[RMDB]
RNA sequence: GGGAACGACUCGAGUAGAGUCGAAAAAAAUCGUCCAAAGCUCCUAAGCUAAAUGAUUUAGAUGUGAGCAGGGGUGACAAGAAAGUGUGUGAGUUUAAGGAGGCCUUCUCAGAUUUAAGCCAACAUCAAUUCCUACGUGUUUCGACACGUAGGAAUUAAAAGAAACAACAACAACAAC
Reactivity to DMS in 0.01 (KOAc 150mM, MgCl2 10mM, bicine 150mM(pH8.5), 24C), signal-to-noise 1, nucleotides 027 to 126: a020a100a090u010c030g000u010c040c040a090a150a120g010c020u000c040c060u000a080a080g040c030u020a100a080a070u020g000a110u010u000u000a020g040a040u010g030u010g000a070g010c020a080g010g020g000g030u020g010a020c100a070a060g010a180a030a060g020u000g010u010g010u010g000a140g000u010u000u000a080a050g000g020a130g000g020c040c060u000u000c030u000c030a110g000a110u000u000u000a070a090g000c050c040a040a020c110a060u010c130

This 177-nucleotide RNA was probed chemically with DMS.
Values cover nucleotides 27 to 126.